RNA sequence: GGGAACGACUCGAGUAGAGUCGAAAAGCACAGACAACUAGGAUGUUGGCUUAGAAGCAGCCACCAUUUAAAGAGUGCGUAAUAGCUCACUAGUCGAGUGACCCUGCGCCGAAAAUGUACCGGGGCUAAACAUAUUACCGAAGCUGUGGACUACACCCUACAUUGGCGAGUUCGCUCGCCAAUGUAGAAAAGAAACAACAACAACAAC
Reactivity to 2A3 in 0.01 (KOAc 150mM, MgCl2 10mM, bicine 150mM(pH8.5), 24C), signal-to-noise 2, nucleotides 027 to 156: g000c020a020c000a030g170a090c050a070a030c090u040a020g020g000a000u000g000u000u030g000g000c000u020u020a030g010a040a010g000c010a000g000c000c000a020c000c000a060u030u010u030a060a060a000g020a000g000u010g000c000g000u030a030a050u010a040g000c000u010c000a010c000u000a020g030u010c040g080a030g100u040g070a110c020c000c000u040g000c060g050c000c030g120a110a080a000a060u120g010u040a070c000c060g000g000g030g020c070u140a080a080a000c040a040u090a050u120u150a050c060c040g030a090a020g040c050u030g020u040g030g030a020c000u100a050c030a100c070c010